[RMDB]
RNA sequence: GGGAACGACUCGAGUAGAGUCGAAAAUGAGAACUGCAAAGGGUUUGGUGAUGUCGCGCCCCUCUCGAACCUUGUUACACUUGAGGAACUGAAUCUCCACUACUGUGACAAAGUAACCUCUGGAAUGGAUCAUAUUCCUAUUCGUAGGAAUAUGAUCAAAAGAAACAACAACAACAAC
Reactivity to 2A3 in 0.01 (KOAc 150mM, MgCl2 10mM, bicine 150mM(pH8.5), 24C), signal-to-noise 9, nucleotides 027 to 126: u180g030a020g030a090a040c050u060g010c070a040a080a080g050g010g000u060u080u080g060g020u080g030a130u080g040u080c020g000c010g020c040c000c000c010u020c000u000c020g050a050a050c000c000u030u050g050u060u080a060c070a030c050u050u080g020a040g020g010a050a010c030u070g030a080a090u050c030u020c050c020a050c050u170a040c050u090g010u040g050a020c010a020a090a000g020u040a040a090c010c010u030c020u030g030g080a090a070u140g130
Reactivity to DMS in 0.01 (KOAc 150mM, MgCl2 10mM, bicine 150mM(pH8.5), 24C), signal-to-noise 7, nucleotides 027 to 126: u010g010a090g000a100a070c060u000g010c080a050a100a090g000g000g010u000u010u020g000g010u020g000a060u020g020u010c060g030c110g010c040c030c030c030u000c020u010c030g000a030a070c040c030u010u000g010u010u010a050c080a060c090u000u000g000a080g000g010a080a070c070u010g010a160a110u040c070u000c010c030a090c050u010a060c200u010g000u020g000a050c050a020a040a060g000u010a060a090c090c020u000c030u010g010g000a100a090u030g010